Structure probing data (2A3) for a 207-nucleotide construct.

RNA sequence: GGGAACGACUCGAGUAGAGUCGAAAAGUAAUAGAUAACUGGAUGCAGCGUAGGGUACAACGCAUAUCCAGUACGAAUGGUACCUGUAAAUAAAAUAUGUGCCCUAGUACAAGUACCAACAGAAGGAUAAGCGAUGGUGAUGUCAAUCACAUUUGCACCUGCAUGGUGCUUUCGAGCACCAUGCAGGAAAAGAAACAACAACAACAAC
Reactivity to 2A3 in 0.01 (KOAc 150mM, MgCl2 10mM, bicine 150mM(pH8.5), 24C), signal-to-noise 1, nucleotides 027 to 156: g050u080a040a110u010a210g110a080u040a060a100c000u000g070g000a000u120g170c210a150g010c230g000u000a000g010g000g000u020a000c020a000a000c020g040c040a000u000a010u190c000c000a010g000u000a000c020g080a000a090u060g020g020u000a000c000c000u030g020u070a150a000a100u140a000a120a060a030u070a050u040g000u020g020c000c000c000u000a000g010u000a000c000a050a000g010u000a000c000c000a010a010c000a130g110a100a010g120g070a040u050a070a040g000c060g020a040u060g130g020u060g000a020u030g150u100c060a070a090u000c020a060c000a040u000u060u230g060c060a060